[RMDB]
RNA sequence: GGGAACGACUCGAGUAGAGUCGAAAAUGAAAUGGCUUUCUGUAGAGGACAUCCUGGCCGUCCGAGCUGUACACUCCCAGCUGAAGGACCUGGUGGACAACCACGCCAGUGUGUGGGCAUGUGCCAGGGUUAUGGGCAAAUUCGUUUGCCCAUAACCAAAAGAAACAACAACAACAAC
Reactivity to 2A3 in 0.01 (KOAc 150mM, MgCl2 10mM, bicine 150mM(pH8.5), 24C), signal-to-noise 2, nucleotides 027 to 126: u120g040a010a050a070u070g020g000c040u060u110u030c040u110g140u100a060g010a080g090g000a010c000a020u050c000c040u040g000g000c010c000g020u000c030c000g000a030g000c010u020g080u280a020c300a210c050u080c040c030c000a000g000c010u060g080a210a030g050g010a040c020c020u000g000g000u020g000g090a050c040a090a090c060c000a010c010g000c000c000a040g010u010g030u000g010u050g300g040g000c080a120u050g000u080g030c000c010a000g050
Reactivity to DMS in 0.01 (KOAc 150mM, MgCl2 10mM, bicine 150mM(pH8.5), 24C), signal-to-noise 4, nucleotides 027 to 126: u020g010a070a110a090u000g020g020c040u000u000u000c060u000g010u000a120g040a170g010g000a070c100a080u010c040c010u000g020g010c000c070g010u000c010c010g000a080g030c020u000g010u010a050c090a080c200u020c160c060c020a090g000c050u000g010a110a130g010g010a100c030c060u010g010g030u000g010g000a130c120a070a090c030c030a040c030g000c000c100a030g000u020g020u000g000u000g010g000g000c060a050u010g010u000g010c010c010a030g010